Chemical mapping of a 177-nucleotide RNA with DMS and 2A3. 2A3 adducts were read by reverse transcription with SuperScript II with manganese. The data come from the RNA Mapping Database (RMDB), library OK2TST.
RNA sequence: GGGAACGACUCGAGUAGAGUCGAAAAGGUGUAAUGCGAAAUGAAGAAAAUGAAGUAAUUGCAUUCUGUAGUUUAAUGCCAACAUACUUUAAUGAUGCCAUUUCAGUCGAUUUAAUUAGAUGGUUGCGUCAAGUACAGUCUUCGGACUGUACUUGACAAAAGAAACAACAACAACAAC
Reactivity to DMS in 0.01 (KOAc 150mM, MgCl2 10mM, bicine 150mM(pH8.5), 24C), signal-to-noise 3, nucleotides 027 to 126: g020g010u000g020u010a080a100u000g020c080g010a030a050a040u000g000a130a110g010a060a130a120a100u010g000a050a040g010u000a020a100u000u020g000c010a010u000u000c110u010g010u040a130g000u020u000u000a020a040u000g010c070c130a060a050c170a110u000a030c020u000u000u000a090a050u010g000a170u010g000c120c010a030u000u000u010c080a080g010u000c050g020a100u000u000u000a050a080u000u000a100g010a040u010g030g030u000u010g000c120
Reactivity to 2A3 in 0.01 (KOAc 150mM, MgCl2 10mM, bicine 150mM(pH8.5), 24C), signal-to-noise 2, nucleotides 027 to 126: g040g010u050g010u130a070a060u130g020c020g030a040a000a010u080g050a110a190g120a050a120a000a040u040g010a000a000g030u040a010a060u020u030g050c000a030u000u060c010u150g180u100a150g000u060u070u100a020a000u090g060c030c030a000a070c060a070u110a030c000u030u030u120a100a050u050g100a030u050g010c030c000a000u040u000u030c030a060g000u090c020g000a030u000u000u220a150a140u020u080a050g060a100u060g090g000u060u080g010c040